[RMDB]
RNA sequence: GGGAACGACUCGAGUAGAGUCGAAAAAUAACUGAUUGUACGAUUAGCGAUUCGGGUAAACCGUAUCGCACACCACCGCGAGUGCGUGAUAUUCCUUAUGUUCGUUCUCAAAUUGGCGGACCGCGACUAUGAACUGACACUUCGGUGUCAGUUCAUAAAAAGAAACAACAACAACAAC
Reactivity to 2A3 in 0.01 (KOAc 150mM, MgCl2 10mM, bicine 150mM(pH8.5), 24C), signal-to-noise 1, nucleotides 027 to 126: a040u120a030a050c050u030g110a150u130u130g030u100a130c060g070a110u070u130a020g040c000g000a010u020u040c000g010g010g070u120a120a120a130c030c000g000u000a000u000c010g000c030a010c030a010c000c000a020c030c030g070c060g120a050g170u060g000c060g020u040g000a020u000a050u080u070c050c000u040u130a070u240g030u010u050c020g000u120u030c020u040c000a080a140a160u100u050g080g000c000g040g000a000c010c090g110c030g000a000c050
Reactivity to DMS in 0.01 (KOAc 150mM, MgCl2 10mM, bicine 150mM(pH8.5), 24C), signal-to-noise 1, nucleotides 027 to 126: a060u010a110a060c110u010g010a070u000u020g020u000a050c150g000a050u010u010a160g040c040g010a050u010u000c040g030g010g000u010a090a090a260c020c010g030u000a010u000c000g000c000a100c050a050c020c040a060c130c000g010c140g000a050g010u000g030c120g050u000g000a070u000a070u010u000c020c050u000u020a070u010g000u000u000c020g000u030u000c020u000c090a050a090a230u020u000g000g000c000g000g000a090c060c070g010c070g020a160c110
The record gives the reactivity of an RNA of 177 nucleotides to 2A3 and DMS. Source: RMDB library OK2TST, as collected in RNAgym. Reactivities are given for positions 27 through 126. DMS adducts were read by reverse transcription with MarathonRT. Conditions: 150 mM KOAc, 10 mM MgCl2 and 150 mM bicine (pH 8.5), 24 C.